Chemical mapping of a 207-nucleotide RNA with DMS and 2A3.
RNA sequence: GGGAACGACUCGAGUAGAGUCGAAAAGCUUCCUCUUGGCGCGGAGGUUCAACUGCGCUCGCUCCCCAUAUCGGUGUGGGCGCACCGGAUUUACAAAUUAAAGUCCUUUAGGGAGCGGAAAGGGACAAAAACUUGCACGUGUUCGCACGUGCAAGAACAAUGCAAGUUAGUUCGCUAACUUGCAUUGAAAAGAAACAACAACAACAAC
Reactivity to DMS in 0.01 (KOAc 150mM, MgCl2 10mM, bicine 150mM(pH8.5), 24C), signal-to-noise 3, nucleotides 027 to 156: g020c080u000u010c000c010u000c050u000u000g010g030c000g040c030g010g010a160g010g010u000u000c070a070a150c050u000g010c000g030c010u000c000g000c000u010c010c000c000c070a160u000a060u000c020g000g040u000g020u000g020g010g020c100g000c020a010c000c030g030g040a270u010u000u010a270c120a040a100a130u000u000a040a080a070g020u000c010c000u000u000u000a070g010g000g000a020g020c020g010g010a030a070a060g000g030g020a110c070a100a050a070a120a120c000u010u000g010c000a030c010g040u000g000u010u000c300g030c000a010c030g020u000g000c000a000a000g000a050a110
Reactivity to 2A3 in 0.01 (KOAc 150mM, MgCl2 10mM, bicine 150mM(pH8.5), 24C), signal-to-noise 5, nucleotides 027 to 156: g050c040u120u060c000c000u010c020u010u020g030g020c010g000c000g000g010a010g040g020u090u130c040a090a040c090u100g000c000g000c010u000c000g000c000u000c010c020c000c010a060u100a100u120c000g000g000u010g000u000g020g030g000c020g010c000a010c000c000g020g010a030u130u240u140a150c260a040a010a010u140u220a150a100a000g010u000c000c010u010u010u040a020g000g010g010a000g000c020g000g000a030a010a010g040g000g020a020c110a050a110a010a010a050c000u010u010g000c000a010c010g000u020g040u060u080c190g020c090a000c000g000u000g000c010a000a000g000a000a010

The 2A3 profile rests on 3,928 reads. The RNA was probed in 150 mM KOAc, 10 mM MgCl2 and 150 mM bicine (pH 8.5) at 24 C.